Chemical mapping of a 177-nucleotide RNA with 2A3 and DMS. The 2A3 profile rests on 1,472 reads. Source: RMDB library OK1LIB, as collected in RNAgym. The reactions ran in a buffer of 150 mM KOAc, 10 mM MgCl2 and 150 mM bicine (pH 8.5), at 24 C. 2A3 adducts were read by reverse transcription with SuperScript II with manganese.

[RMDB]
RNA sequence: GGGAACGACUCGAGUAGAGUCGAAAAUCGGUUCGUUAGCCAGUACGCCAUCGAUCUGGCCCACAACGCCGGCCAGUAGAGACCUCACGCGCAGACCGGCUGAGCGUGCGGCCGUUGGGCCGUCGGCAUUCAGCCACCGAUUCGUCGGUGGCUGAAUAAAAGAAACAACAACAACAAC
Reactivity to 2A3 in 0.01 (KOAc 150mM, MgCl2 10mM, bicine 150mM(pH8.5), 24C), signal-to-noise 3, nucleotides 027 to 126: u020c010g000g030u080u000c000g050u100u110a040g020c020c030a090g070u080a060c030g030c050c070a040u060c000g050a040u050c010u060g090g060c000c010c000a100c010a130a040c070g000c030c000g010g020c020c000a020g020u150a040g040a040g040a210c000c000u020c000a020c010g050c000g030c010a020g030a110c020c090g190g000c000u000g010a010g020c020g010u020g030c040g000g000c010c000g100u140u170g060g020g000c000c000g020u020c010g020g030c020
Reactivity to DMS in 0.01 (KOAc 150mM, MgCl2 10mM, bicine 150mM(pH8.5), 24C), signal-to-noise 2, nucleotides 027 to 126: u030c010g040g010u000u010c030g020u000u000a120g000c060c070a080g000u030a070c150g000c050c060a010u000c030g020a040u040c000u000g000g010c000c000c000a070c140a100a110c070g020c120c070g020g020c000c040a080g030u000a090g000a280g000a120c010c000u000c000a030c020g000c050g040c070a040g010a300c160c160g000g000c010u030g000a040g000c000g040u000g000c110g000g010c000c000g000u000u090g000g010g000c000c020g000u000c040g000g000c110